[RMDB]
RNA sequence: GGGAACGACUCGAGUAGAGUCGAAAACGGACGGGAUUUUAGCCAGGUUGCAUGUUUACCCAUUUCGUGCUGGGUCCUGGACCCACUUAAGAUUAUAGAAAUAUUAUCGAUUUCUUUACCGUCCGGAACUAUACCGCCCAUUCGUGGGCGGUAUAGUAAAAGAAACAACAACAACAAC
Reactivity to DMS in 0.01 (KOAc 150mM, MgCl2 10mM, bicine 150mM(pH8.5), 24C), signal-to-noise 1, nucleotides 027 to 126: c010g010g000a000c020g000g000g000a130u010u000u010u020a050g000c060c020a050g010g000u010u000g010c040a020u000g010u020u010u010a100c070c060c000a090u000u000u000c100g070u000g000c100u000g000g040g030u010c010c040u000g010g000a160c050c050c060a100c130u010u010a050a030g010a060u000u000a060u010a030g010a060a070a050u000a040u000u000a100u000c110g000a100u010u000u000c010u020u000u000a190c000c010g020u000c010c000g010g020a100

Conditions: 150 mM KOAc, 10 mM MgCl2 and 150 mM bicine (pH 8.5), 24 C. The record gives the reactivity of an RNA of 177 nucleotides to DMS. For DMS, 991 sequencing reads were counted.